RNA sequence: GGGAACGACUCGAGUAGAGUCGAAAACAGCUAGCCCUCACGUGCAUCUCAGGGAGCGCGGGGUUUACCACACGGAGGUGAAACUGCUGAACCGUCGGAGUGUCCUUGAGGCACUGGCCGAGUGCACCGAGGUUCGUUCGUUCGCGGGCGGACUUCGAAAAGAAACAACAACAACAAC
Reactivity to 2A3 in 0.01 (KOAc 150mM, MgCl2 10mM, bicine 150mM(pH8.5), 24C), signal-to-noise 9, nucleotides 027 to 126: c020a000g020c020u060a010g010c000c020c000u010c020a150c030g020u020g020c020a160u050c050u030c090a090g030g040g030a070g040c050g000c020g020g030g010g010u030u060u050a090c030c010a030c010a020c060g090g020a050g020g000u030g020a070a040a010c040u050g010c000u020g030a050a040c010c010g050u040c020g020g030a060g010u030g020u010c010c010u090u180g050a150g030g000c000a000c000u030g060g030c010c010g020a020g020u050g010c020a030c020
Reactivity to DMS in 0.01 (KOAc 150mM, MgCl2 10mM, bicine 150mM(pH8.5), 24C), signal-to-noise 9, nucleotides 027 to 126: c060a060g010c050u010a100g000c140c000c010u010c070a110c100g010u000g000c040a050u020c040u020c080a110g010g010g000a170g010c140g010c040g000g000g000g010u010u000u010a050c060c040a130c080a090c110g010g010a080g000g000u000g000a060a060a040c080u000g000c050u010g010a120a150c020c010g000u010c030g000g000a070g010u010g000u000c000c010u040u010g000a110g010g000c000a020c020u000g000g010c020c020g000a080g020u010g010c040a090c080

Chemical mapping of a 177-nucleotide RNA with 2A3 and DMS. DMS adducts were read by reverse transcription with MarathonRT. For 2A3 the reverse transcriptase was SuperScript II with manganese. Source: RMDB library OK1LIB, as collected in RNAgym. Reactivities are rounded to 0.1 and cut off at 0 and 3.